RNA sequence: GGGAACGACUCGAGUAGAGUCGAAAAAGAGUUAAGUUAAGUUUGUAAGGCUAGUUUGAAAGCGAAAGGUCUCCCAUUAGCCCCUACCUGGUGAGGUGCCUGUCUGAUAUUACACUCCCAAGAGUAACACUUCUAAACUCUUCGGAGUUUAGAAGUGAAAAGAAACAACAACAACAAC
Reactivity to DMS in 0.01 (KOAc 150mM, MgCl2 10mM, bicine 150mM(pH8.5), 24C), signal-to-noise 3, nucleotides 027 to 126: a090g010a110g030u010u010a070a130g010u000u000a070a100g010u000u000u000g010u000a070a080g010g020c020u010a050g010u000u000u020g010a100a070a130g030c030g000a040a090a130g030g000u000c030u000c040c000c010a070u000u000a140g020c060c000c050c050u000a060c060c080u010g010g010u000g010a070g030g000u000g000c040c020u000g010u000c020u000g000a100u010a070u010u000a050c120a100c130u010c000c010c030a090a110g000a130g010u000a080a120